RNA sequence: GGGAACGACUCGAGUAGAGUCGAAAAAGCAACGAGUGUGUGUGGGACGUUUUAUCCCAAGCUCUGAGUAGAGCACGCGCUCACACACACCGCGAGCGAGCAUCAGCAGAGCGCAAACGCUCGUAAAUAACGCAGACCAUUUCGAUGGUCUGCGUUAAAAAGAAACAACAACAACAAC
Reactivity to 2A3 in 0.01 (KOAc 150mM, MgCl2 10mM, bicine 150mM(pH8.5), 24C), signal-to-noise 1, nucleotides 027 to 126: a020g080c020a010a080c030g040a120g110u000g000u000g010u000g000u010g000g050g010a030c020g000u000u130u140u200a040u010c020c010c000a000a010g000c010u060c000u020g270a240g170u300a000g160a010g040c000a010c020g050c020g000c000u000c000a010c000a000c010a000c000a000c010c000g000c000g000a000g020c020g020a020g010c010a070u130c020a000g210c000a020g080a060g130c050g000c020a080a010a010c020g020c000u020c010g010u000a030a030a000
Reactivity to DMS in 0.01 (KOAc 150mM, MgCl2 10mM, bicine 150mM(pH8.5), 24C), signal-to-noise 2, nucleotides 027 to 126: a070g000c120a150a130c020g000a150g030u000g010u000g010u000g040u030g000g000g000a100c010g030u010u010u000u000a160u020c020c010c010a140a080g000c000u000c000u010g040a210g030u010a090g000a020g000c010a070c110g020c060g010c010u000c000a000c000a010c010a020c010a010c010c030g000c010g000a040g010c030g000a100g000c030a120u000c080a180g020c190a120g010a050g010c100g010c090a060a120a180c090g000c010u000c010g000u010a040a070a140